[RMDB]
RNA sequence: GGGAACGACUCGAGUAGAGUCGAAAAAUCGUCUGGAUCUGAGUAACUUGAUCAUCAAGCCGGUGCAGCGAAUCACUAAAUACGAGCUACUCAUCAAAGAGAUCAUCAAGGCCACCGAGGGAGCCGGUCAAAGACUUAAUUUCGAUUAAGUCUUUGAAAAAGAAACAACAACAACAAC
Reactivity to DMS in 0.01 (KOAc 150mM, MgCl2 10mM, bicine 150mM(pH8.5), 24C), signal-to-noise 7, nucleotides 027 to 126: a060u010c060g010u010c030u010g010g010a100u000c050u000g010a080g010u000a050a080c030u000u000g010a110u000c120a080u010c090a090a120g020c070c060g010g010u000g010c080a080g010c070g000a080a080u010c070a060c080u000a070a050a080u000a080c080g010a040g010c030u000a030c020u000c020a070u010c120a050a090a080g000a100g000a050u000c040a070u010c070a080a090g000g010c020c030a070c060c040g010a080g000g010g000a110g020c040c030g010g000
Reactivity to 2A3 in 0.01 (KOAc 150mM, MgCl2 10mM, bicine 150mM(pH8.5), 24C), signal-to-noise 3, nucleotides 027 to 126: a000u040c030g100u010c020u020g010g050a060u010c010u050g020a000g060u020a020a070c020u040u070g030a040u150c040a030u060c040a100a000g070c020c020g060g000u050g010c020a020g040c010g070a050a040u110c040a030c090u160a120a050a050u190a070c050g000a000g010c020u020a020c010u010c030a080u050c040a100a070a040g060a010g000a060u040c020a020u050c010a050a040g040g000c030c030a050c030c020g010a060g000g040g000a020g030c040c000g020g000
Source: RMDB library OK2TRN, as collected in RNAgym. Structure probing data (DMS and 2A3) for a 177-nucleotide construct. 2A3 adducts were read by reverse transcription with SuperScript II with manganese. The reactions ran in a buffer of 150 mM KOAc, 10 mM MgCl2 and 150 mM bicine (pH 8.5), at 24 C. 2A3 is a SHAPE reagent: it acylates the 2'-hydroxyl of flexible nucleotides of all four kinds.